Conditions: 150 mM KOAc, 10 mM MgCl2 and 150 mM bicine (pH 8.5), 24 C. This 177-nucleotide RNA was probed chemically with DMS and 2A3. The DMS profile rests on 1,712 reads. For 2A3 the reverse transcriptase was SuperScript II with manganese.

RNA sequence: GGGAACGACUCGAGUAGAGUCGAAAAUAGCCUCUGUAGGGACUUGAUUUUUCUGUUACUUUCUGGCCGUUUCACCACCCCCCUUCCUCCCUCCAAGUGGCAUUGUAAAACUCACAGUGACAAAGAGGAUAAGUUGGGGUUUCGACCCCAACUUAUCAAAAGAAACAACAACAACAAC
Reactivity to DMS in 0.01 (KOAc 150mM, MgCl2 10mM, bicine 150mM(pH8.5), 24C), signal-to-noise 1, nucleotides 027 to 126: u020a140g050c000c010u010c020u040g000u000a080g030g000g000a050c040u010u000g000a060u040u000u000u020u000c070u000g000u000u030a030c070u000u000u040c030u000g000g020c000c010g060u000u020u000c030a090c090c060a140c010c000c000c010c000c030u010u000c030c010u000c000c010c010u000c050c030a110a130g030u040g010g000c030a050u010u010g020u010a060a040a030a120c160u000c080a030c030a010g020u030g000a060c010a020a090a230g000a090g000
Reactivity to 2A3 in 0.01 (KOAc 150mM, MgCl2 10mM, bicine 150mM(pH8.5), 24C), signal-to-noise 2, nucleotides 027 to 126: u080a020g030c000c000u040c020u010g090u130a050g010g000g040a040c070u030u080g060a100u120u090u030u040u040c010u010g060u060u060a070c040u020u100u060c000u000g010g000c020c000g070u000u080u110c060a050c040c000a040c000c020c000c000c000c020u020u000c010c020u000c000c000c000u000c000c000a120a050g000u030g040g000c010a010u010u110g010u020a080a130a020a000c060u050c010a030c000a080g020u020g060a030c050a020a070a000g090a080g090